[RMDB]
RNA sequence: GGGAACGACUCGAGUAGAGUCGAAAACUGGGUAUGUAUCUAGAAGUGGAAAAACAAAAAAAGGAAAUAAGUUAUGAAAAUAAAAACCAUGUCUUGAGCUGGGUGCGCUGGUGUGUGCCUAUAUCCCUAGAUUCUCAAGAGUUGAGACAGGAGGAUCACAUAGUAAGGCAUUCGUGCCUUACUAUGUAAAAGAAACAACAACAACAAC
Reactivity to DMS in 0.01 (KOAc 150mM, MgCl2 10mM, bicine 150mM(pH8.5), 24C), signal-to-noise 1, nucleotides 027 to 156: c070u000g010g020g050u000a030u000g040u000a070u000c020u010a050g030a080a070g020u000g000g000a040a030a060a070a170c080a030a030a050a040a080a060a080g020g000a090a050a130u000a030a100g010u020u000a140u000g010a090a040a050a110u020a070a050a060a070a060c010c050a060u000g000u010c030u010u000g000a050g010c070u000g020g020g010u010g030c050g070c060u000g010g010u000g010u000g020u020g000c060c020u000a080u000a090u000c000c020c040u000a040g000a100u000u000c030u000c000a070a100g000a110g020u010u000g000a070g000a060c040a110g010g000a050g020g000a080u000c060
Reactivity to 2A3 in 0.01 (KOAc 150mM, MgCl2 10mM, bicine 150mM(pH8.5), 24C), signal-to-noise 2, nucleotides 027 to 156: c010u010g000g010g030u060a050u070g030u000a120u020c030u020a070g010a180a050g120u060g020g030a090a030a070a050a020c070a020a080a080a030a030a040a040g070g040a100a110a070u080a080a040g030u050u120a100u130g030a060a070a020a040u150a010a100a010a040a030c030c020a030u060g060u020c030u040u030g020a010g050c010u040g050g040g000u040g010c030g010c030u050g000g110u060g050u000g010u010g020c000c000u060a060u050a040u100c000c000c000u010a030g010a060u040u010c000u000c030a040a070g040a030g100u060u070g010a000g010a030c030a050g000g050a010g020g010a010u050c010